[RMDB]
RNA sequence: GGGAACGACUCGAGUAGAGUCGAAAAAAUAAGAGUUUGGAUUAACCUAUAGGGAAUUAGCGAUCAAGAAUACAACCUAAGGACCUGGUUGACUUAAUUAUUCCAUAGGUUGGAGGAAGCUAGCGAAAGGACUGUUAAUAUUCGUAUUAACAGUCCUAAAAGAAACAACAACAACAAC
Reactivity to 2A3 in 0.01 (KOAc 150mM, MgCl2 10mM, bicine 150mM(pH8.5), 24C), signal-to-noise 1, nucleotides 027 to 126: a030a030u190a020a040g030a030g010u060u090u140g040g050a070u150u020a060a060c020c010u030a070u130a300g060g020g000a030a030u030u050a050g030c090g040a010u090c080a080a000g030a100a000u170a230c080a020a020c010c010u060a050a100g090g000a000c030c070u020g020g060u040u010g020a070c000u030u020a020a060u080u030a090u120u040c010c000a000u000a020g000g000u010u080g020g010a000g030g020a030a020g010c020u040a000g010c030g140a170a110
Reactivity to DMS in 0.01 (KOAc 150mM, MgCl2 10mM, bicine 150mM(pH8.5), 24C), signal-to-noise 2, nucleotides 027 to 126: a060a050u030a110a080g000a080g010u000u000u000g000g020a300u000u000a170a100c050c000u000a030u000a220g010g010g000a090a030u000u000a020g020c040g000a040u000c030a040a020g010a090a130u010a070c060a020a030c070c060u030a090a070g000g010a110c300c150u000g000g020u010u000g010a110c040u000u000a040a020u000u010a120u010u000c000c000a080u000a010g000g000u010u010g030g000a050g000g000a030a050g010c040u000a060g000c090g000a030a100